[RMDB]
RNA sequence: GGGAACGACUCGAGUAGAGUCGAAAAGAACAACGAGCUUGCUAACGGUUGGGGCAACCUGGUUAACCGUACGGUUUCGAUGGCGUAUAAGAACUUCGGUGAGGUUCCAACACCUGGUGAGCUGACGAUUCCGUAAGUUCUUCGGAACUUACGGAAUAAAAGAAACAACAACAACAAC
Reactivity to 2A3 in 0.01 (KOAc 150mM, MgCl2 10mM, bicine 150mM(pH8.5), 24C), signal-to-noise 2, nucleotides 027 to 126: g040a080a010c050a000a030c040g040a020g020c000u010u030g010c020u030a000a030c100g020g000u010u010g000g000g000g000c040a020a010c010c000u020g040g040u020u090a060a050c060c010g000u030a020c040g110g230u060u130u190c120g070a100u140g090g020c020g000u050a030u010a050a090g050a010a000c000u050u030c030g000g000u040g060a110g130g000u050u000c000c000a010a000c010a040c020c020u000g030g000u010g000a000g020c000u030g050a030c040g020
Reactivity to DMS in 0.01 (KOAc 150mM, MgCl2 10mM, bicine 150mM(pH8.5), 24C), signal-to-noise 4, nucleotides 027 to 126: g000a140a110c090a090a140c100g020a050g000c010u010u000g010c000u010a020a050c190g000g000u010u000g010g000g000g000c040a120a030c010c010u000g020g000u000u000a060a060c080c100g010u000a030c070g010g000u000u000u010c230g000a150u000g010g000c020g020u000a020u000a100a090g000a050a010c010u000u000c300g010g000u010g010a060g040g010u010u000c010c000a020a000c020a030c030c040u000g010g020u010g000a010g000c000u010g010a080c140g000